[RMDB]
RNA sequence: GGGAACGACUCGAGUAGAGUCGAAAAGCUUAAUAACCUGCGCUGAGCCCUUCUCCCCCAGCUUGCCUGUGUCCUAGGGAAUUGGAAGGUCAUCCUUCAAAGGAUCGUGUGGAAGUCCUGCUCGGGGUCCAAACAUGGUAAUUCGUUACCAUGUUAAUCACAUAUCUUGGUUCGCCAAGAUAUGUGAAAAAGAAACAACAACAACAAC
Reactivity to 2A3 in 0.01 (KOAc 150mM, MgCl2 10mM, bicine 150mM(pH8.5), 24C), signal-to-noise 3, nucleotides 027 to 156: g020c040u160u140a110a060u030a250a180c040c040u070g040c080g010c070u070g070a030g000c030c010c000u080u060c070u030c010c000c000c010c000a000g000c010u000u010g070c000c000u100g010u020g000u060c010c010u020a040g070g010g030a030a050u120u060g110g000a000a020g000g010u110c040a060u130c010c000u060u140c040a030a000a090g040g000a040u030c010g080u060g000u040g180g020a030a030g020u040c030c020u000g040c000u010c010g000g000g000g000u020c000c040a030a020a010c000a000u010g000g000u000a020a020u040u020c100g010u070u000a000c000c000a000u000g000u000u010a000a030
Reactivity to DMS in 0.01 (KOAc 150mM, MgCl2 10mM, bicine 150mM(pH8.5), 24C), signal-to-noise 2, nucleotides 027 to 156: g020c040u000u010a080a120u010a070a080c040c010u000g010c080g030c040u000g000a080g000c000c010c020u000u000c020u000c030c020c010c030c040a080g090c050u000u000g040c020c020u000g020u010g020u000c040c020u000a110g000g030g020a100a120u000u000g000g010a070a060g020g030u000c060a100u000c010c010u000u010c110a070a120a080g030g010a030u000c060g020u010g030u010g000g000a100a120g000u000c020c030u000g040c050u000c060g000g010g010g000u000c030c080a100a020a000c000a000u000g000g030u000a000a090u000u000c240g030u000u000a010c000c000a000u000g010u000u000a030a160